Record summary
An RNA of 177 nucleotides, treated with DMS and read out base by base. Conditions: 150 mM KOAc, 10 mM MgCl2 and 150 mM bicine (pH 8.5), 24 C.
RNA sequence: GGGAACGACUCGAGUAGAGUCGAAAAGAUGCGUGGUAUGGCGAUACGCCGGGACCUUACCAGCAUUUCCGGCAGGCGCAGGUGCGCGCGGUGGAGCAGGGGCUUCCUCUCAUCCGCGCGGCGAAUACAGGCUAGUCAUGUUCGCAUGACUAGCCUGAAAAGAAACAACAACAACAAC
Reactivity to DMS in 0.01 (KOAc 150mM, MgCl2 10mM, bicine 150mM(pH8.5), 24C), signal-to-noise 1, nucleotides 027 to 126: g010a040u000g000c010g030u000g040g020u000a030u000g000g000c040g040a160u010a090c150g010c050c050g040g030g030a230c110c050u000u000a030c020c000a050g010c000a020u000u000u000c070c020g050g040c130a060g000g050c050g020c090a030g010g020u000g020c040g010c000g000c000g010g030u010g000g000a020g000c270a050g010g000g010g000c270u050u010c010c010u010c030u000c010a200u000c000c000g030c010g000c030g010g020c040g010a120a110u140a150
Source information: The data come from the RNA Mapping Database (RMDB), library OK2TST.